Chemical mapping of a 177-nucleotide RNA with 2A3. Conditions: 150 mM KOAc, 10 mM MgCl2 and 150 mM bicine (pH 8.5), 24 C. It was measured as part of the RMDB library RFM100. Values cover nucleotides 27 to 126.
RNA sequence: GGGAACGACUCGAGUAGAGUCGAAAAGUCAUUUUGCCCUGAAAAUCAAGGCCAAUUUUUUCCUUUCUUCAUCCAAAAGCCUUCAGAAAGCUCCCUCUGCACCUCUCUGGAGGGUCAUAUUACAUUUCGAUCUCGUGGAAUUCGUUCCACGAGAUCGAAAAGAAACAACAACAACAAC
Reactivity to 2A3 in 0.01 (KOAc 150mM, MgCl2 10mM, bicine 150mM(pH8.5), 24C), signal-to-noise 1, nucleotides 027 to 126: g050u020c060a050u050u120u050u150g050c020c010c000u030g160a160a160a010a100u170c050a040a000g000g000c000c110a010a010u080u040u030u000u000u010c040c000u050u070u000c000u160u030c050a070u010c020c020a020a000a110a130g050c000c030u000u000c000a040g060a030a010a010g000c000u140c020c070c000u000c000u020g010c060a050c050c000u000c000u000c010u060g040g010a000g000g030g040u000c070a040u100a100u020u170a150c110a170u000u080u000
Annotation:
The 2A3 profile rests on 469 reads.